[RMDB]
RNA sequence: GGGAACGACUCGAGUAGAGUCGAAAAUUGAACGAAUCUGAUUACAAGCAGCUAGAAGAAAACAUUCAAUCACUCGUUAAUAAGAGAUACGAGUUGCAGAACGGAAGUGCAGAAAUUGGGUUACGUAAUCAAGUUAAAGAUAAACAAUCAGAAUUAGUCAUCUUUUGCCUUUCGAGGCAAAAGAUGAAAAAGAAACAACAACAACAAC
Reactivity to DMS in 0.01 (KOAc 150mM, MgCl2 10mM, bicine 150mM(pH8.5), 24C), signal-to-noise 2, nucleotides 027 to 156: u000u010g030a100a110c040g010a040a080u020c000u000g000a070u000u010a070c050a150a260g040c050a070g020c040u000a090g010a160a170g040a160a080a070a120c030a140u000u000c020a170a140u040c050a050c030u030c000g020u010u000a100a150u000a150a190g000a230g030a190u000a050c000g000a080g010u000u000g040c020a200g040a040a060c080g010g000a080a080g010u000g020c040a070g000a020a060a130u000u020g000g040g000u000u000a110c040g050u010a130a040u000c060a030a030g000u000u040a050a040a070g000a100u040a040a070a090c070a050a110u010c020a100g000a060a150u010u000a060g000
Reactivity to 2A3 in 0.01 (KOAc 150mM, MgCl2 10mM, bicine 150mM(pH8.5), 24C), signal-to-noise 2, nucleotides 027 to 156: u040u030g010a050a010c020g000a030a010u000c020u000g020a040u030u060a010c070a090a060g010c000a000g020c030u080a070g080a180a010g090a010a210a000a040c050a010u060u060c010a000a100u090c000a000c020u000c000g000u050u040a060a060u150a270a060g040a010g000a040u070a160c000g000a000g000u000u050g000c020a010g030a080a020c010g040g040a020a040g030u000g030c050a000g020a030a040a000u050u040g000g000g010u000u010a050c000g020u020a010a060u030c020a030a000g040u070u110a130a090a000g080a030u190a050a120a010c040a030a020u120c030a010g100a080a020u120u030a050g090